This 177-nucleotide RNA was probed chemically with 2A3. Reactivities are given for positions 27 through 126. Reactivities are rounded to 0.1 and cut off at 0 and 3. Conditions: 150 mM KOAc, 10 mM MgCl2 and 150 mM bicine (pH 8.5), 24 C. It was measured as part of the RMDB library RFM100.
RNA sequence: GGGAACGACUCGAGUAGAGUCGAAAACGGUACUAUGAAUUGAUGCAAGGUGUGGAGCGACCUUAAACAGUUCUGGUGGUGCUCUGAAUGGAGUGCUCUACUGAGAUUAUAAAAUAGAAGGUAAGCUCCAAUGACGGGCAUUCGUGCCCGUCAUUGGAAAAGAAACAACAACAACAAC
Reactivity to 2A3 in 0.01 (KOAc 150mM, MgCl2 10mM, bicine 150mM(pH8.5), 24C), signal-to-noise 1, nucleotides 027 to 126: c030g100g000u000a070c000u060a050u140g040a010a020u040u010g110a040u020g100c000a000a000g060g000u140g010u080g050g010a030g000c000g000a000c000c000u070u060a070a000a070c000a000g000u080u000c010u010g000g060u110g000g000u070g000c010u000c000u060g180a010a000u300g030g000a040g000u070g010c030u000c020u000a190c010u060g000a000g000a080u090u090a050u270a190a040a200a000u140a030g060a130a000g160g000u070a200a000g000c000u000